[RMDB]
RNA sequence: GGGAACGACUCGAGUAGAGUCGAAAAGAUAUGGAGCGUCUACCCACCAUCGUGUGAGCCUAUAAUCUACGUUAAUUCGGAAACGAAUUAACGUAGGUAGGCUCACCGAUGAGGACGCUCCUAAGUCCGGUAUGGAUAUCUUCGGAUAUCCAUACCGAAAAGAAACAACAACAACAAC
Reactivity to DMS in 0.01 (KOAc 150mM, MgCl2 10mM, bicine 150mM(pH8.5), 24C), signal-to-noise 2, nucleotides 027 to 126: g000a080u020a200u000g010g020a010g010c000g030u010c000u030a250c070c030c020a300c110c040a010u010c030g010u050g000u000g000a020g000c000c010u000a050u000a300a160u020c000u010a000c000g020u000u000a000a020u000u000c000g000g000a180a080a270c030g020a010a000u000u000a000a000c010g020u000a000g000g000u010a000g000g000c000u000c000a010c000c000g040a000u000g000a110g000g000a010c000g020c000u000c000c010u010a030a220g010u050c130
Reactivity to 2A3 in 0.01 (KOAc 150mM, MgCl2 10mM, bicine 150mM(pH8.5), 24C), signal-to-noise 2, nucleotides 027 to 126: g170a070u300a220u300g000g020a000g010c010g010u000c050u070a300c050c000c000a020c010c020a010u010c020g130u020g010u000g300a000g000c000c040u120a130u050a210a240u100c010u000a010c000g000u000u000a000a010u000u000c020g020g000a090a130a140c020g030a000a000u010u000a000a000c000g020u000a000g000g020u000a000g020g000c050u000c000a000c030c010g000a000u000g000a010g000g000a010c000g000c000u000c030c010u030a030a000g070u040c090

Conditions: 150 mM KOAc, 10 mM MgCl2 and 150 mM bicine (pH 8.5), 24 C. This 177-nucleotide RNA was probed chemically with DMS and 2A3. For DMS, 1,115 sequencing reads were counted. Reactivities are given for positions 27 through 126.